[RMDB]
RNA sequence: GGGAACGACUCGAGUAGAGUCGAAAAUAUAAAGUGUUGAAAGGCUACUUCAAAAAGGUGGACAUCGGUUCUCUGAAAGUGGGAGGACCGGCAGCACAGGCCAUGAUUUCUCUCUGGUUGCAUGGGGGACACACUUCUUUUUCGAAAGAAGUGUGUCAAAAGAAACAACAACAACAAC
Reactivity to 2A3 in 0.01 (KOAc 150mM, MgCl2 10mM, bicine 150mM(pH8.5), 24C), signal-to-noise 2, nucleotides 027 to 126: u300a000u080a030a130a090g020u020g000u070u050g070a070a040a040g070g000c010u010a000c010u080u100c200a060a130a040a020a020g020g010u010g050g000a010c000a070u090c060g010g000u020u000c000u000c000u040g170a300a240a090g220u270g020g060g000a000g000g010a000c030c000g010g060c010a000g030c010a030c000a010g110g000c010c010a040u080g030a080u030u140u040c040u000c000u000c030u100g040g020u060u070g060c040a030u060g030g000g000g040
Reactivity to DMS in 0.01 (KOAc 150mM, MgCl2 10mM, bicine 150mM(pH8.5), 24C), signal-to-noise 2, nucleotides 027 to 126: u010a060u000a100a110a130g020u000g020u000u000g010a060a100a090g000g010c010u000a030c010u000u000c090a060a070a110a140a110g000g020u000g010g000a030c040a080u000c010g020g000u000u000c000u000c010u000g020a080a100a140g030u000g020g010g010a030g010g000a020c010c020g000g020c080a020g020c040a030c060a100g020g010c030c040a040u010g010a070u010u000u000c060u000c030u000c070u010g020g010u000u000g000c030a040u000g000g000g010g000
An RNA of 177 nucleotides, treated with 2A3 and DMS and read out base by base. Values cover nucleotides 27 to 126. 2A3 adducts were read by reverse transcription with SuperScript II with manganese. The 2A3 profile rests on 1,513 reads. The DMS profile rests on 2,382 reads. For DMS the reverse transcriptase was MarathonRT.